[RMDB]
RNA sequence: GGGAACGACUCGAGUAGAGUCGAAAAUGCCCGGUCUUUGCCCCGGAUCAACUUUAAUAGUUAUGACGGUUUCCGACUCGGGAAAAUAGAUUCUUGCAUAACGACGGAAAUUUCAGAGUUUGUUCUGGAAGACAUCGUAAUUCGUUACGAUGUCUUCAAAAGAAACAACAACAACAAC
Reactivity to DMS in 0.01 (KOAc 150mM, MgCl2 10mM, bicine 150mM(pH8.5), 24C), signal-to-noise 3, nucleotides 027 to 126: u010g000c030c090c140g010g030u000c020u020u000u000g010c210c050c030c030g000g030a030u040c030a010a020c030u010u020u040a100a040u020a050g050u000u040a080u020g020a130c150g000g000u000u000u010c010c030g000a100c050u010c020g030g010g020a060a060a070a030u040a040g000a080u030u030c070u000u000g000c080a040u020a080a300c030g020a060c010g010g030a120a050a050u000u020u010c020a040g000a020g000u000u020u040g000u000u010c010u000g010
Reactivity to 2A3 in 0.01 (KOAc 150mM, MgCl2 10mM, bicine 150mM(pH8.5), 24C), signal-to-noise 8, nucleotides 027 to 126: u040g030c010c020c000g000g020u010c010u060u090u150g050c020c000c000c020g020g010a060u040c040a010a030c010u100u130u200a180a110u150a140g110u080u130a070u170g100a030c030g000g000u010u060u040c050c030g050a060c050u030c080g010g000g000a070a040a010a010u180a010g050a030u140u070c030u050u090g010c010a040u030a120a030c020g020a000c020g100g100a050a080a090u080u090u040c040a050g010a010g050u030u060u210g020u060u040c010u020g050
Chemical mapping of a 177-nucleotide RNA with DMS and 2A3. The reactions ran in a buffer of 150 mM KOAc, 10 mM MgCl2 and 150 mM bicine (pH 8.5), at 24 C. For 2A3 the reverse transcriptase was SuperScript II with manganese. Source: RMDB libraries RFM100 and RFMREP, as collected in RNAgym.